[RMDB]
RNA sequence: GGGAACGACUCGAGUAGAGUCGAAAAACGAUGAUAUGGAUUUACUCCGAGGAGACGAACUACCACGAACAGGGGAAACUCUACCCGUGGCGUCUCCGUUUGACGAGUAAGUCCUAAGUCAACAUGCAUGCAUGCGGCUUCGGCCGCAUGAAAAGAAACAACAACAACAAC
Reactivity to DMS in 0.01 (KOAc 150mM, MgCl2 10mM, bicine 150mM(pH8.5), 24C), signal-to-noise 3, nucleotides 027 to 129: a150c100g010a000u030g010a010u060a020u050g000g050a000u000u010u000a030c000u020c000c030g010a050g010g000a020g010a030c010g000a050a070c010u140a300c000c000a030c060g040a090a100c150a150g000g000g000g000a040a020a040c000u020c040u000a190c220c210c000g020u010g030g040c050g000u000c000u040c000c000g000u000u060u010g040a260c300g110a050g000u000a060a000g030u030c000c020u000a000a000g020u030c020a120a150c100a210u050g030c160a080u020g020
Reactivity to 2A3 in 0.01 (KOAc 150mM, MgCl2 10mM, bicine 150mM(pH8.5), 24C), signal-to-noise 3, nucleotides 027 to 129: a000c100g040a060u020g010a000u010a020u020g000g000a010u010u000u010a000c000u000c000c000g000a030g020g010a000g040a010c020g010a010a010c050u170a060c270c020a030c000g010a060a010c010a070g050g010g000g000a000a000a000c000u000c000u020a010c020c020c000g000u000g010g010c000g000u000c000u000c000c000g010u010u040u070g020a000c000g000a000g000u000a000a000g000u020c000c000u000a000a000g010u010c010a020a030c040a090u250g070c010a020u090g010
Chemical mapping of a 170-nucleotide RNA with DMS and 2A3. For 2A3, 7,665 sequencing reads were counted. DMS adducts were read by reverse transcription with MarathonRT. For 2A3 the reverse transcriptase was SuperScript II with manganese. For DMS, 6,219 sequencing reads were counted.